[RMDB]
RNA sequence: GGGAACGACUCGAGUAGAGUCGAAAAUGAUACAACAGACGUAUCCCAUCUGUCUAACCUCCUGAAACACCUCAAGAACAACAAUGAAACACCUAAAUCACUCUCUGACUACCUCCCAGUAGCACCAGUAACACAGCAAACAUCUGUCACAGUAGGAGAGAGAUACGGUAUUCGUACCGUAUCUCUCAAAAGAAACAACAACAACAAC
Reactivity to DMS in 0.01 (KOAc 150mM, MgCl2 10mM, bicine 150mM(pH8.5), 24C), signal-to-noise 3, nucleotides 027 to 156: u000g000a270u020a100c030a040a130c060a030g020a040c050g040u000a150u000c080c050c020a170u010c010u050g000u000c020u000a080a070c060c010u010c020c010u000g010a120a060a090c060a060c020c000u000c020a070a070g020a060a100c050a100a100c060a070a130u000g010a150a070a090c020a070c020c030u000a040a050a100u000c050a040c030u000c020u010c020u020g040a100c040u000a050c020c020u010c020c010c020a210g020u010a060g000c050a060c030c020a070g000u010a060a050c050a060c050a080g020c050a080a030a070c060a050u000c020u020g010u010c040a090c040a080g000u000a090g010g020a300
Reactivity to 2A3 in 0.01 (KOAc 150mM, MgCl2 10mM, bicine 150mM(pH8.5), 24C), signal-to-noise 7, nucleotides 027 to 156: u090g020a020u050a110c050a080a010c020a120g060a010c020g050u060a060u030c000c000c000a020u010c020u020g040u000c010u020a060a100c020c010u030c000c010u050g060a070a080a030c050a030c020c030u070c070a070a040g080a090a020c030a050a010c010a030a100u110g040a100a050a020c030a030c030c020u050a070a060a060u070c020a030c030u060c010u010c030u040g040a140c020u090a060c010c000u030c000c000c000a000g010u020a010g010c020a020c030c000a010g030u040a050a020c030a000c010a070g040c030a040a080a040c020a050u020c020u060g050u080c040a020c020a110g070u080a020g050g060a050